[RMDB]
RNA sequence: GGGAACGACUCGAGUAGAGUCGAAAAGAAGAGAGUCGACGCAAGCGACGAUAACUGCGGAACGGUAACCGUAGUACCGUACGGUCAUGGCACGCGAAAGCGAAAGAACGAACCAUGCCAUAAGAGACGAGGGAUGCGUAUUCGUACGCAUCCCUCGAAAAGAAACAACAACAACAAC
Reactivity to 2A3 in 0.01 (KOAc 150mM, MgCl2 10mM, bicine 150mM(pH8.5), 24C), signal-to-noise 1, nucleotides 027 to 126: g130a000a000g120a000g000a000g070u000c000g000a050c000g050c130a090a000g000c030g000a040c090g000a000u150a000a150c000u010g000c000g030g020a000a000c100g180g140u260a050a100c000c000g000u000a020g040u050a000c000c030g000u070a000c040g000g120u080c000a000u010g000g000c110a000c010g000c000g070a210a000a000g000c000g030a000a130a000g080a130a170c100g000a000a000c000c000a030u000g030c070c000a020u020a000a070g080a000g000a000
Reactivity to DMS in 0.01 (KOAc 150mM, MgCl2 10mM, bicine 150mM(pH8.5), 24C), signal-to-noise 1, nucleotides 027 to 126: g080a150a010g010a080g000a150g000u000c090g000a030c080g000c190a290a160g000c010g040a140c050g020a090u060a000a000c010u000g000c120g000g010a110a000c100g000g000u000a010a150c000c210g000u050a020g000u000a020c020c000g000u090a110c010g050g000u060c090a020u000g000g000c140a090c130g000c000g000a040a010a130g000c000g000a090a100a010g000a050a020c070g000a080a250c130c000a100u000g000c080c000a080u000a090a130g000a040g000a230

This 177-nucleotide RNA was probed chemically with 2A3 and DMS.
For DMS the reverse transcriptase was MarathonRT.
Values are in units of 0.01, from 0 to 300, in steps of 10.
The DMS profile rests on 836 reads.
Values cover nucleotides 27 to 126.
The RNA was probed in 150 mM KOAc, 10 mM MgCl2 and 150 mM bicine (pH 8.5) at 24 C.